[RMDB]
RNA sequence: GGGAACGACUCGAGUAGAGUCGAAAAUGAAUAUCAGACUCCAAUAUGCUGAGGGGGCCUCUGCAGUAGGGGUGGGAGGAGACCAUCCCAUUUCAUCUUCCUAUCCAGUGGUAACACUCUCCCUUGUUGAACUCAACACCUGGCUUGAGCAAUGGCAUAUACCUAAUCGUUUCGACGAUUAGGUAUAAAAAGAAACAACAACAACAAC
Reactivity to 2A3 in 0.01 (KOAc 150mM, MgCl2 10mM, bicine 150mM(pH8.5), 24C), signal-to-noise 2, nucleotides 027 to 156: u080g020a040a030u090a010u160c080a040g070a110c110u010c100c030a080a070u210a140u180g040c080u050g030a060g000g030g010g010g020c040c000u040c050u080g040c030a030g050u180a020g050g010g010g000u010g010g010g010a030g000g010a010g030a020c020c030a020u050c000c020c030a000u060u100u030c000a010u000c010u040u010c010c010u000a080u060c000c000a030g000u030g050g000u080a150a020c030a010c030u040c000u000c000c000c000u010u040g030u020u030g030a080a060c020u000c140a010a010c030a070c080c060u050g020g060c040u050u030g060a020g050c020a030a110u050g030g000c050a030
Reactivity to DMS in 0.01 (KOAc 150mM, MgCl2 10mM, bicine 150mM(pH8.5), 24C), signal-to-noise 2, nucleotides 027 to 156: u000g000a110a160u000a110u010c020a100g010a090c040u000c040c030a120a070u000a070u000g010c040u000g010a090g010g040g040g000g010c040c060u010c050u030g020c070a120g040u010a080g020g010g020g050u000g010g020g050a080g000g000a080g010a140c070c100a180u000c010c040c010a140u000u000u000c090a170u000c030u030u000c020c020u010a050u010c010c020a130g000u020g030g000u020a050a160c060a020c010u000c030u000c020c000c040u000u000g020u000u000g010a080a110c030u000c020a020a020c030a120c090c030u010g020g000c060u000u000g000a060g020c010a080a110u000g020g000c060a170